[RMDB]
RNA sequence: GGGAACGACUCGAGUAGAGUCGAAAACUUUAUGGAGCUACGGCCUGCGAGAACCUGCCCACUGGUGAGCGCCGGCCCGACAAUCAAACAGUGGGAUACACACGUAGACGCACGCUGGACGGACCUUUGGACGGCGGUUCGACUCCGCCCACCUCCAGAUUGACAAACAGUUCGCUGUUUGUCAAUCAAAAGAAACAACAACAACAAC
Reactivity to 2A3 in 0.01 (KOAc 150mM, MgCl2 10mM, bicine 150mM(pH8.5), 24C), signal-to-noise 2, nucleotides 027 to 156: c030u140u160u120a090u160g050g000a030g040c010u040a030c040g010g000c000c010u000g030c060g010a030g080a030a030c010c010u060g040c000c000c000a020c020u020g040g010u070g040a090g030c010g000c010c030g000g010c000c030c010g040a010c030a040a040u090c110a090a050a060c010a030g000u010g010g030g000a020u170a010c130a000c010a000c020g000u060a030g050a100c060g040c030a010c060g000c030u020g020g000a020c020g040g000a020c000c000u060u060u100g040g020a020c010g020g000c000g020g000u030u040c010g010a040c020u020c030c000g010c000c010c000a060c000c000u000c010c010a020
Conditions: 150 mM KOAc, 10 mM MgCl2 and 150 mM bicine (pH 8.5), 24 C.
An RNA of 207 nucleotides, treated with 2A3 and read out base by base.
2A3 adducts were read by reverse transcription with SuperScript II with manganese.
It was measured as part of the RMDB library ARCHII.
For 2A3, 1,153 sequencing reads were counted.
Values are in units of 0.01, from 0 to 300, in steps of 10.